[RMDB]
Chemical mapping of a 177-nucleotide RNA with DMS and 2A3.
The RNA was probed in 150 mM KOAc, 10 mM MgCl2 and 150 mM bicine (pH 8.5) at 24 C.
DMS adducts were read by reverse transcription with MarathonRT.
The data come from the RNA Mapping Database (RMDB), library VIROID.
RNA sequence: GGGAACGACUCGAGUAGAGUCGAAAAUGGUCUUUAAAUUCGGAGGAAUCGUCCUUUAAACGUUCCUCCAAGAGACCAUUCCCCAAACCCUUACUUAUGUAAGAAUGGUUCGGCGAAUGUACCGUUUAUCCUAUUUCUUCUUCGGAAGAAAUAGGAUAAAAGAAACAACAACAACAAC
Reactivity to DMS in 0.01 (KOAc 150mM, MgCl2 10mM, bicine 150mM(pH8.5), 24C), signal-to-noise 1, nucleotides 027 to 126: u000g020g000u000c000u000u000u000a210a080a210u000u000c040g000g000a010g000g000a010a010u010c020g000u010c090c130u020u020u010a130a110a010c010g020u020u000c000c000u000c010c000a030a020g000a010g000a000c010c000a040u000u000c060c010c010c090a070a110a090c110c060c000u010u000a010c010u030u050a110u020g000u010a000a000g000a130a070u010g020g010u000u010c060g000g000c110g000a150a120u010g020u000a070c110c050g010u010u020u000
Reactivity to 2A3 in 0.01 (KOAc 150mM, MgCl2 10mM, bicine 150mM(pH8.5), 24C), signal-to-noise 2, nucleotides 027 to 126: u000g000g000u000c010u040u020u030a140a150a150u090u130c300g000g010a000g010g030a020a040u300c070g000u060c020c040u160u150u260a090a180a000c000g000u000u000c000c000u000c000c000a010a000g000a000g030a000c000c000a000u020u080c000c000c010c000a060a110a030c000c000c000u000u020a010c030u200u280a060u300g000u020a000a010g050a130a120u250g090g020u080u070c000g060g050c030g120a270a090u090g030u150a070c030c020g000u000u030u000